[RMDB]
Structure probing data (2A3 and DMS) for a 170-nucleotide construct. Source: RMDB library 15KLIB, as collected in RNAgym. Conditions: 150 mM KOAc, 10 mM MgCl2 and 150 mM bicine (pH 8.5), 24 C.
RNA sequence: GGGAACGACUCGAGUAGAGUCGAAAACUUCUUGUUCUCGAGGGCCUUCCUUCGUCGGUGAUCCCGCCUCUCCUCGUCGGUGAAUCCUCCCCCGGGGGGCCUCUUCCUAGGUCCGGAGUCUAUCUCCAAGCAACUUGGUUCGCCAAGUUGAAAAGAAACAACAACAACAAC
Reactivity to 2A3 in 0.01 (KOAc 150mM, MgCl2 10mM, bicine 150mM(pH8.5), 24C), signal-to-noise 9, nucleotides 027 to 129: c020u080u070c020u090u170g060u110u030c040u010c040g030a100g020g030g060c010c010u050u060c040c010u050u060c030g090u020c040g030g040u070g030a090u060c010c010c010g020c000c010u030c000u010c010c000u030c010g080u020c050g030g030u060g050a040a070u040c000c000u030c000c010c000c000c010g010g020g000g000g000g000c010c000u020c000u040u020c000c020u020a020g010g010u000c010c010g010g000a010g000u000c020u060a120u030c010u010c020c010a010a010g040
Reactivity to DMS in 0.01 (KOAc 150mM, MgCl2 10mM, bicine 150mM(pH8.5), 24C), signal-to-noise 7, nucleotides 027 to 129: c120u010u010c020u030u040g030u050u020c020u020c010g000a140g010g020g020c070c080u000u020c020c030u000u000c050g040u000c060g000g000u030g010a080u020c000c000c000g020c040c030u000c000u020c000c000u020c060g010u030c060g010g000u020g020a100a090u020c020c010u000c010c000c000c000c020g000g000g000g010g000g020c030c000u010c060u030u020c020c030u000a030g010g010u000c020c040g000g000a020g010u000c020u000a250u030c040u020c010c040a110a130g020